[RMDB]
RNA sequence: GGGAACGACUCGAGUAGAGUCGAAAACGUGUAAUCCAUAAUCCAGUAACACGAGCUGGUGCUUGCUAGACACCUUUUCAAUGUUUAAUUUUUUUGAAAUAAGCUUUGAUAAAGCCUUCCUCGCAAAUUCCGGAUACAUGAACAUGUCGCCAACAUGAGUUAAAUAUACUUUCGAGUAUAUUUAACUAAAAGAAACAACAACAACAAC
Reactivity to 2A3 in 0.01 (KOAc 150mM, MgCl2 10mM, bicine 150mM(pH8.5), 24C), signal-to-noise 6, nucleotides 027 to 156: c020g010u010g010u050a110a100u030c010c010a050u090a090a050u040c010c010a020g020u100a160a040c040a030c210g040a080g030c010u010g010g020u020g030c020u040u060g000c010u030a020g010a060c020a030c010c000u030u020u020u020c020a020a010u020g020u020u050u110a110a150u100u070u050u040u060u100u220g070a050a050a030u040a020a000g000c000u040u040u020g060a080u150a080a050a030g000c000c010u050u020c020c000u010c020g010c010a030a070a100u140u020c080c030g010g000a010u020a050c020a030u050g030a060a010c010a010u030g010u070c040g010c080c010a020a020c010a070u090g000
Reactivity to DMS in 0.01 (KOAc 150mM, MgCl2 10mM, bicine 150mM(pH8.5), 24C), signal-to-noise 3, nucleotides 027 to 156: c050g040u010g020u000a150a090u000c010c010a140u000a140a120u000c020c010a060g020u000a190a080c080a020c050g010a140g020c030u000g020g030u010g010c040u010u000g020c070u000a130g000a110c110a050c040c020u020u010u000u000c030a030a040u000g000u000u000u010a050a000u000u000u000u010u020u030u060g010a030a050a070u000a040a060g000c010u000u000u000g010a110u000a090a060a060g010c030c030u000u010c020c020u000c060g040c050a040a070a180u000u000c010c040g010g000a190u000a080c090a080u000g000a060a070c030a080u000g000u000c030g020c070c040a050a110c050a060u000g020

An RNA of 207 nucleotides, treated with 2A3 and DMS and read out base by base. Source: RMDB library OK3TST, as collected in RNAgym. The reactions ran in a buffer of 150 mM KOAc, 10 mM MgCl2 and 150 mM bicine (pH 8.5), at 24 C. Reactivities are given for positions 27 through 156. 2A3 adducts were read by reverse transcription with SuperScript II with manganese.